[RMDB]
RNA sequence: GGGAACGACUCGAGUAGAGUCGAAAAGUUGUAAGGUUCGCCUUACAACAAAAUAAAACAGGCUAGUACCGGCCUGAAAAAGGUACGAAGAUCGAAUGAUCAAAAGACACUUGUUCGCAAGUGUCAAGCUCACGUAUAAGUUCGCUUAUACGUGAGCAAAAGAAACAACAACAACAAC
Reactivity to 2A3 in 0.01 (KOAc 150mM, MgCl2 10mM, bicine 150mM(pH8.5), 24C), signal-to-noise 4, nucleotides 027 to 126: g000u010u010g000u000a000a000g040g030u010u090c200g130c020c000u010u000a000c000a000a000c000a000a010a010a000u100a010a060a010a030c130a010g000g000c000u030a020g000u000a000c000c010g020g000c010c010u000g040a020a000a000a000a000g010g000u010a000c020g010a130a030g000a000u040c050g100a200a260u300g000a000u020c040a040a030a020a110g020a000c000a000c020u020u020g020u070u070c230g010c100a000a000g010u000g020u000c000a000a000
Reactivity to DMS in 0.01 (KOAc 150mM, MgCl2 10mM, bicine 150mM(pH8.5), 24C), signal-to-noise 2, nucleotides 027 to 126: g010u000u010g000u010a010a010g000g010u000u020c220g000c000c000u000u000a010c010a000a000c000a010a070a050a070u010a110a090a130a170c230a010g000g000c000u000a110g010u000a040c000c000g020g000c000c000u010g020a010a010a070a110a070g020g020u000a000c000g010a110a110g010a010u000c010g010a110a020u020g020a010u000c030a130a030a120a070g010a030c000a010c000u000u000g010u000u010c240g040c000a000a010g020u000g010u000c000a040a050

The record gives the reactivity of an RNA of 177 nucleotides to 2A3 and DMS. 2A3 adducts were read by reverse transcription with SuperScript II with manganese. DMS adducts were read by reverse transcription with MarathonRT. Reactivities are given for positions 27 through 126.